RNA sequence: GGGAACGACUCGAGUAGAGUCGAAAAGUCUGAAAAGCGGCACGGCCGUCGUUGAUGGCGAUGUGUGUCGCGUCAGCCAACUUCGUGGCGCGGGCCGCCCGCGCGAUGCGUUGGCCGAUGGCGACCACCGUUCCGAGAAAUUCGUUUCUCGGAACGGAAAAGAAACAACAACAACAAC
Reactivity to 2A3 in 0.01 (KOAc 150mM, MgCl2 10mM, bicine 150mM(pH8.5), 24C), signal-to-noise 2, nucleotides 027 to 126: g000u000c040u060g120a160a120a080a000g030c030g020g000c090a070c100g100g050c050c000g000u030c020g060u080u210g110a150u170g070g000c050g020a090u130g070u010g020u030g000u070c000g000c020g010u000c000a010g000c010c010a010a000c000u300u300c030g000u060g170g000c010g000c000g000g030g020c220c150g170c020c000c000g030c010g000c000g030a010u020g040c040g010u000u000g020g000c000c020g030a030u070g160g000c010g010a030c020c000a030
Reactivity to DMS in 0.01 (KOAc 150mM, MgCl2 10mM, bicine 150mM(pH8.5), 24C), signal-to-noise 4, nucleotides 027 to 126: g020u000c010u010g010a070a070a100a130g030c010g010g000c000a060c090g030g020c050c010g030u000c010g020u000u010g020a070u010g000g010c010g010a070u000g010u010g020u010g010u000c010g030c010g000u000c000a010g000c000c000a010a010c010u010u020c040g040u010g000g030c010g020c000g010g010g020c220c110g030c060c010c020g010c000g010c000g000a000u000g010c300g010u010u000g000g000c000c030g020a020u000g020g010c010g000a140c010c040a070

This 177-nucleotide RNA was probed chemically with 2A3 and DMS. Values cover nucleotides 27 to 126. Values are in units of 0.01, from 0 to 300, in steps of 10. The RNA was probed in 150 mM KOAc, 10 mM MgCl2 and 150 mM bicine (pH 8.5) at 24 C. For DMS the reverse transcriptase was MarathonRT. 2A3 adducts were read by reverse transcription with SuperScript II with manganese.